[RMDB]
RNA sequence: GGGAACGACUCGAGUAGAGUCGAAAAGAGGAGUCAUUCGUGACUCCUCAAAGGGAGCUCAACUCUCCCGCUGAAGUCCGAGAGCCUUCGGACCCAAAAGAAUGCUGUUCCUGUUCGCAGGAACAAAUCACGCAACCUUAUUCGUAAGGUUGCGUGAAAAAGAAACAACAACAACAAC
Reactivity to 2A3 in 0.01 (KOAc 150mM, MgCl2 10mM, bicine 150mM(pH8.5), 24C), signal-to-noise 2, nucleotides 027 to 126: g000a000g010g000a010g030u010c010a020u130u130c230g070u060g010a010c000u010c000c000u010c010a010a000a000g000g000g010a000g000c020u040c170a010a050c060u030c010u000c100c000c010g020c100u070g070a050a020g020u020c010c070g090a070g010a040g150c000c050u070u010c000g060g000a100c000c010c000a040a090a010a020g150a080a060u180g050c040u030g070u000u010c000c000u000g010u030u030c230g020c060a000g000g010a010a000c000a010a010a000
Reactivity to DMS in 0.01 (KOAc 150mM, MgCl2 10mM, bicine 150mM(pH8.5), 24C), signal-to-noise 2, nucleotides 027 to 126: g000a020g010g010a000g030u000c000a060u000u000c180g000u000g000a030c000u000c010c000u000c000a010a000a060g000g020g020a020g020c190u000c300a110a120c300u000c000u010c000c000c000g000c110u000g010a060a060g010u010c040c000g010a060g020a080g020c150c020u000u000c060g000g010a060c010c030c070a090a080a090a140g000a050a110u030g010c180u010g000u000u000c000c000u000g000u000u010c210g020c030a000g000g000a010a000c000a000a040a040

Record summary: Chemical mapping of a 177-nucleotide RNA with 2A3 and DMS. The 2A3 profile rests on 1,658 reads.